[RMDB]
RNA sequence: GGGAACGACUCGAGUAGAGUCGAAAAAGUUUGUCAUUUGUUAAUGGCAGAAUCUUUGGAGAAAUCAUAGUUCUUGGGCUCUGGGGGAAAUACGACCGCAAGGCUGAAACUUGAAGGAAUUGACGGAAGGGCACACCAGGGGUGGAGCCUGUGGCUUACUUUAUUGGUUGUUCGCAACCAAUAAAGUAAAAGAAACAACAACAACAAC
Reactivity to 2A3 in 0.01 (KOAc 150mM, MgCl2 10mM, bicine 150mM(pH8.5), 24C), signal-to-noise 1, nucleotides 027 to 156: a000g080u060u000u010g010u010c010a040u030u010u260g110u140u250a030a000u000g010g030c000a000g040a080a080u090c030u090u070u140g070g000a030g060a050a070a020u090c070a040u070a080g010u080u020c000u120u060g040g020g010c040u060c020u030g010g020g000g000g060a000a130a020u110a040c110g020a020c060c000g090c090a030a060g030g000c060u040g000a060a100a100c030u050u070g000a020a020g020g010a030a070u090u020g040a040c010g000g000a010a000g000g000g020c040a000c000a010c060c000a030g070g050g000g000u030g020g030a060g010c040c010u010g020u020g110g020c020u030u030
Structure probing data (2A3) for a 207-nucleotide construct. For 2A3 the reverse transcriptase was SuperScript II with manganese. The data come from the RNA Mapping Database (RMDB), library PDB130. High 2A3 reactivity points to a flexible backbone, as in loops and unpaired stretches. Conditions: 150 mM KOAc, 10 mM MgCl2 and 150 mM bicine (pH 8.5), 24 C. Reactivities are given for positions 27 through 156.